An RNA of 177 nucleotides, treated with DMS and 2A3 and read out base by base. Values cover nucleotides 27 to 126. The RNA was probed in 150 mM KOAc, 10 mM MgCl2 and 150 mM bicine (pH 8.5) at 24 C. As a SHAPE reagent, 2A3 marks flexible, mostly unpaired nucleotides at the ribose 2'-OH. The 2A3 profile rests on 311 reads.
RNA sequence: GGGAACGACUCGAGUAGAGUCGAAAAAGUUUAAUGUUGCGGUUUUUGUAGUGCUUGUAUUUAUGUUGGAGUGGGUGCAAUAAAUGUCCCGUCUUGAAACACGGAUCAAGGAGGCCGUUUUAUGUGCCUACCGUUCCAAAUUCGUUUGGAACGGUAGAAAAGAAACAACAACAACAAC
Reactivity to DMS in 0.01 (KOAc 150mM, MgCl2 10mM, bicine 150mM(pH8.5), 24C), signal-to-noise 3, nucleotides 027 to 126: a160g000u020u000u010a070a080u000g000u000u000g000c300g000g000u000u000u000u000u020g010u010a060g010u020g000c010u000u000g010u000a050u030u010u030a060u010g000u000u010g010g000a140g030u000g000g010g010u010g030c030a030a100u040a040a050a080u020g020u000c030c000c010g000u020c000u000u010g010a060a060a060c100a040c140g000g000a060u000c030a020a030g000g000a060g010g000c110c020g030u010u020u010u020a050u010g020u030g000c120
Reactivity to 2A3 in 0.01 (KOAc 150mM, MgCl2 10mM, bicine 150mM(pH8.5), 24C), signal-to-noise 1, nucleotides 027 to 126: a030g090u070u070u040a170a120u040g000u040u040g000c000g000g090u000u070u070u000u150g100u200a020g000u000g050c080u050u050g060u080a220u030u070u060a180u050g140u050u030g090g000a060g050u010g000g040g000u050g000c060a040a040u070a210a090a230u120g070u030c000c010c030g000u000c000u060u100g140a110a050a000c080a030c050g130g000a000u090c090a110a050g000g010a000g000g050c000c000g020u010u010u010u010a010u020g080u000g150c000